[RMDB]
Chemical mapping of a 177-nucleotide RNA with DMS and 2A3. Reactivities are rounded to 0.1 and cut off at 0 and 3. DMS adducts were read by reverse transcription with MarathonRT. The RNA was probed in 150 mM KOAc, 10 mM MgCl2 and 150 mM bicine (pH 8.5) at 24 C. The 2A3 profile rests on 5,042 reads. It was measured as part of the RMDB library OK2TST.
RNA sequence: GGGAACGACUCGAGUAGAGUCGAAAAUUGCAAUGACAGGAGGAAUGCUGGCGCAAUACCCCUUAACUAAACUGGUUCUAUAUGUUGGAUGGCGCCAAGCAGUUCAAGACGUAGGGAUAUUGGGCUAUAUCACCCAUUUAUUCGUAAAUGGGUGAUAAAAAGAAACAACAACAACAAC
Reactivity to DMS in 0.01 (KOAc 150mM, MgCl2 10mM, bicine 150mM(pH8.5), 24C), signal-to-noise 9, nucleotides 027 to 126: u010u010g010c080a080a080u010g010a080c070a060g010g010a160g010g010a090a080u000g020c040u010g000g010c020g010c010a060a050u010a100c040c010c060c060u000u010a040a050c060u000a040a060a090c110u000g010g010u000u000c100u010a060u010a060u010g010u000u000g010g010a090u010g010g010c030g010c010c010a020a040g010c030a020g010u000u000c100a060a080g010a090c200g010u000a030g010g010g010a050u000a050u000u000g000g010g000c070u000a140
Reactivity to 2A3 in 0.01 (KOAc 150mM, MgCl2 10mM, bicine 150mM(pH8.5), 24C), signal-to-noise 4, nucleotides 027 to 126: u060u060g000c020a010a070u090g040a070c030a060g050g050a020g050g060a140a010u050g030c020u040g030g000c060g000c040a050a060u130a150c000c010c000c010u040u100a040a010c030u050a090a010a140c060u050g010g000u000u020c040u020a100u030a060u250g140u110u040g050g010a050u040g050g010c000g000c020c010a020a030g000c010a010g010u020u070c030a050a030g060a030c070g070u070a020g010g000g010a010u010a060u070u040g010g020g000c020u030a020